[RMDB]
RNA sequence: GGGAACGACUCGAGUAGAGUCGAAAAGGCAAAAGCCGGCGCGCUCUUGAAGAAGCAGAAUCGCUCGACCCAGAUUCAAUAUACUACAAGCCAAGAGGGCUAUGGUGGGACGGCUACCGACAGCAGCCAUAGCGUUGCAGUUCGCUGCAACGCUAUGAAAAGAAACAACAACAACAAC
Reactivity to 2A3 in 0.01 (KOAc 150mM, MgCl2 10mM, bicine 150mM(pH8.5), 24C), signal-to-noise 1, nucleotides 027 to 126: g040g020c010a070a190a030a060g000c020c010g030g000c030g020c000g000c000u000c020u100u060g060a160a090g010a020a020g090c060a030g050a050a030u020c020g010c050u100c140g080a110c000c010c000a010g020a020u060u040c020a060a070u110a030u060a300c090u030a050c040a150a020g020c030c020a060a000g080a070g120g060g000c010u030a040u020g000g020u040g010g030g030a010c040g020g000c030u020a070c010c000g060a030c010a010g050c000a000g010c020
Reactivity to DMS in 0.01 (KOAc 150mM, MgCl2 10mM, bicine 150mM(pH8.5), 24C), signal-to-noise 2, nucleotides 027 to 126: g020g020c020a080a070a170a120g030c050c010g000g030c090g040c050g000c030u000c000u000u000g020a130a100g020a170a080g030c070a070g010a060a060u000c000g020c030u000c130g020a180c040c010c020a090g000a070u000u000c040a080a130u010a140u000a080c090u000a030c120a070a120g000c060c020a040a090g000a120g000g030g020c020u000a050u010g030g040u000g020g000g020a080c100g000g010c020u010a070c060c010g000a060c060a080g020c100a100g010c090
This 177-nucleotide RNA was probed chemically with 2A3 and DMS. Source: RMDB library OK2TRN, as collected in RNAgym. For DMS, 1,387 sequencing reads were counted. 2A3 adducts were read by reverse transcription with SuperScript II with manganese. For 2A3, 1,457 sequencing reads were counted. The reactions ran in a buffer of 150 mM KOAc, 10 mM MgCl2 and 150 mM bicine (pH 8.5), at 24 C.